[RMDB]
RNA sequence: GGGAACGACUCGAGUAGAGUCGAAAAGAAAAAGGAGAAACGCGUGGUCCAACAACGCGACUAGAAAAGGACCACGCGAAGGUCACGAAAAAGAAACGUGACCCAAAUCUAGUCGCGUUGUAGAAAAACCCUAGUAAUCGUUCGCGAUUACUAGGGUAAAAGAAACAACAACAACAAC
Reactivity to DMS in 0.01 (KOAc 150mM, MgCl2 10mM, bicine 150mM(pH8.5), 24C), signal-to-noise 2, nucleotides 027 to 126: g010a040a120a020a150a060g020g000a100g000a060a100a120c020g000c000g020u000g000g010u000c000c010a210a040c010a030a010c010g000c000g000a000c020u000a010g000a050a040a040a020g020g010a010c000c000a020c000g000c000g040a000a010g000g040u000c000a000c000g010a040a060a060a130a200g000a100a040a020c000g000u000g000a000c000c010c300a070a050a110u220c010u000a000g020u000c000g000c000g000u000u000g000u000a070g000a090a030a050a070
Reactivity to 2A3 in 0.01 (KOAc 150mM, MgCl2 10mM, bicine 150mM(pH8.5), 24C), signal-to-noise 1, nucleotides 027 to 126: g150a000a000a120a030a000g090g110a120g060a010a160a010c000g000c000g000u000g020g010u000c000c000a110a080c000a000a000c160g000c010g040a000c000u000a000g180a060a140a020a010g000g000a000c000c000a000c000g040c000g010a000a000g000g000u010c000a000c000g120a050a060a120a070a000g190a030a070a000c000g000u000g000a000c000c000c000a010a150a020u100c030u000a000g000u000c030g000c000g010u000u000g040u040a060g010a000a000a020a020